[RMDB]
RNA sequence: GGGAACGACUCGAGUAGAGUCGAAAAACGAGGUGCACUACUACGGUAGUGCACCUCGAGGCUUUCAACAACGAUAUCAACCGAUUUUCAGUAAAUUGCGAGUUGAUAUGUUGUUUGAAUGCCCCAAUUAUACUAAACUUUUCGAAGUUUAGUAUAAAAAAGAAACAACAACAACAAC
Reactivity to DMS in 0.01 (KOAc 150mM, MgCl2 10mM, bicine 150mM(pH8.5), 24C), signal-to-noise 7, nucleotides 027 to 126: a080c010g010a010g000g040u000g010c000a010c000u000a000c000u010a120c190g030g010u000a010g020u000g020c010a000c010c000u000c000g000a010g010g000c010u000u000u000c000a010a010c010a000a010c000g000a040u000a000u000c000a000a000c000c010g000a030u000u000u000u020c300a170g020u030a030a010a020u000u010g010c160g000a100g010u000u000g000a010u000a000u000g000u000u000g000u000u010u010g010a010a010u000g010c000c000c010c010a080a150
Reactivity to 2A3 in 0.01 (KOAc 150mM, MgCl2 10mM, bicine 150mM(pH8.5), 24C), signal-to-noise 9, nucleotides 027 to 126: a000c010g000a000g010g000u000g000c010a000c000u010a000c010u030a030c230g050g000u000a000g010u000g000c010a000c000c000u000c000g000a000g000g000c000u010u000u000c000a000a000c000a000a000c020g170a020u000a000u010c000a000a000c000c000g030a030u030u030u080u150c110a060g120u300a050a070a080u100u140g090c090g060a250g130u000u000g000a000u000a000u010g000u000u000g050u020u020u100g000a000a000u020g000c000c000c000c000a010a020
Structure probing data (DMS and 2A3) for a 177-nucleotide construct. Source: RMDB libraries RFM100 and RFMREP, as collected in RNAgym. 2A3 adducts were read by reverse transcription with SuperScript II with manganese. Conditions: 150 mM KOAc, 10 mM MgCl2 and 150 mM bicine (pH 8.5), 24 C.